An RNA of 207 nucleotides, treated with DMS and 2A3 and read out base by base. Reactivities are rounded to 0.1 and cut off at 0 and 3. Reactivities are given for positions 27 through 156. For 2A3 the reverse transcriptase was SuperScript II with manganese.

RNA sequence: GGGAACGACUCGAGUAGAGUCGAAAACCCUACUCUGUUCGCAGAGUAGGGAUCGUUAUAUUAGCUUAAUUGGUAGAGCAUUCGUUUUGUAAUCGAAAGGUUUGGGGUUCAAAUCCCUAAUAUAACACCAGUAGUGAACUUACUUCGGUAAGUUCACGUUUAUCCUCCGAUUCGUCGGAGGAUAAACAAAAGAAACAACAACAACAAC
Reactivity to DMS in 0.01 (KOAc 150mM, MgCl2 10mM, bicine 150mM(pH8.5), 24C), signal-to-noise 2, nucleotides 027 to 156: c000c000c000u000a000c000u000c010u020g010u010u020c300g040c030a040g020a030g060u000a010g000g040g020a000u000c080g000u010u000a020u000a020u000u000a050g000c000u000u010a040a120u000u000g020g010u000a080g010a070g010c040a190u000u000c010g030u000u000u000u000g000u000a150a130u010c050g000a030a040a060g010g020u010u000u000g000g000g000g050u000u000c230a010a300a120u010c020c000c000u000a010a000u000a020u010a020a040c020a070c040c020a130g020u000a110g010u000g000a010a020c000u010u010a010c000u000u000c300g060g010u000a010a010g010u000u000c010a000c010
Reactivity to 2A3 in 0.01 (KOAc 150mM, MgCl2 10mM, bicine 150mM(pH8.5), 24C), signal-to-noise 8, nucleotides 027 to 156: c000c000c000u000a000c000u000c000u000g050u060u080c240g010c100a010g000a000g000u010a000g010g000g000a060u110c040g000u010u000a010u000a000u010u010a000g020c010u020u030a050a030u150u230g170g040u160a090g000a000g000c010a020u010u000c020g050u010u050u130u250g180u140a110a100u090c020g010a010a010a010g020g000u010u010u020g010g000g000g000u000u020c000a000a020a000u010c000c000c000u000a000a000u000a000u000a000a010c020a030c010c010a010g110u190a020g000u060g000a000a000c000u000u000a010c010u050u030c230g070g000u000a000a000g000u000u000c000a000c000